Record summary: Chemical mapping of a 177-nucleotide RNA with 2A3 and DMS. For 2A3, 1,961 sequencing reads were counted. 2A3 adducts were read by reverse transcription with SuperScript II with manganese. For DMS the reverse transcriptase was MarathonRT.
RNA sequence: GGGAACGACUCGAGUAGAGUCGAAAAGUGUAAAUAGAGGAGUCAGGGCUCGCACCCGCUCCGCGAACCUAGGGUAACACUGACUGUGGAGCGAAAGAGAUAGCGAGAGAGAACUCGCUAUCAGCAACGACCGAUAAUACUUCGGUAUUAUCGGUCGAAAAGAAACAACAACAACAAC
Reactivity to 2A3 in 0.01 (KOAc 150mM, MgCl2 10mM, bicine 150mM(pH8.5), 24C), signal-to-noise 3, nucleotides 027 to 126: g050u070g010u100a070a100a120u150a080g070a130g040g020a010g040u060c110a060g070g040g000c040u030c150g030c050a080c030c060c000g010c000u000c020c010g000c000g010a030a030c000c050u060a040g010g100g040u040a060a000c050a010c070u040g070a020c010u080g010u070g070g000a030g010c030g060a080a080a020g170a020g000a000u000a000g020c030g000a010g000a020g010a020g020a020a000c000u000c000g000c000u000a000u010c000a000g000c010a020a040
Reactivity to DMS in 0.01 (KOAc 150mM, MgCl2 10mM, bicine 150mM(pH8.5), 24C), signal-to-noise 4, nucleotides 027 to 126: g010u010g000u000a030a070a130u030a100g020a160g010g010a010g000u010c070a080g000g000g010c050u000c140g000c140a240c030c000c000g000c020u000c000c000g040c020g000a130a080c130c070u000a140g000g000g020u000a100a070c060a070c020u000g000a100c130u030g020u010g000g000a080g000c040g000a070a060a120g000a140g020a010u010a000g010c000g000a010g000a160g010a200g000a130a140c010u010c000g000c010u010a010u010c020a090g020c220a080a150
For DMS, 5,230 sequencing reads were counted.